[RMDB]
About this RNA:
Conditions: 150 mM KOAc, 10 mM MgCl2 and 150 mM bicine (pH 8.5), 24 C. An RNA of 177 nucleotides, treated with DMS and 2A3 and read out base by base. For 2A3 the reverse transcriptase was SuperScript II with manganese.

RNA sequence: GGGAACGACUCGAGUAGAGUCGAAAAGAUGAUCAUGGCCGGGCCGGGGAAGCGAAGAGCUUCCAAGAUUUGUGUCAGUCCUGCCGCGAGAGCGAGAGACGCCAUAAAGGGAGCGCGGGCUCUGAAGUGAGCAGAAUGAUUUCGAUCAUUCUGCUCAAAAAGAAACAACAACAACAAC
Reactivity to DMS in 0.01 (KOAc 150mM, MgCl2 10mM, bicine 150mM(pH8.5), 24C), signal-to-noise 4, nucleotides 027 to 126: g000a090u020g010a100u020c060a050u010g010g000c040c040g000g010g020c030c040g020g010g000g000a010a010g000c010g000a060a120g010a300g010c000u000u010c010c000a120a070g000a110u000u010u010g000u010g000u020c040a130g010u010c020c030u030g000c090c040g010c070g000a100g010a100g000c020g000a140g010a080g020a060c050g000c070c000a020u000a040a070a070g010g010g000a070g000c040g030c070g000g010g010c030u010c070u000g010a080a120g020
Reactivity to 2A3 in 0.01 (KOAc 150mM, MgCl2 10mM, bicine 150mM(pH8.5), 24C), signal-to-noise 3, nucleotides 027 to 126: g040a030u200g030a050u090c040a030u100g010g000c010c000g010g000g040c000c000g110g000g010g010a010a010g010c010g010a050a000g030a090g090c000u000u000c010c010a000a000g100a030u060u130u170g170u080g040u040c010a010g050u000c000c020u000g050c020c010g000c010g000a110g000a000g000c030g030a030g000a010g030a100c020g000c030c010a060u120a100a130a040g070g000g000a080g010c060g000c020g030g010g020c020u030c010u040g030a100a010g050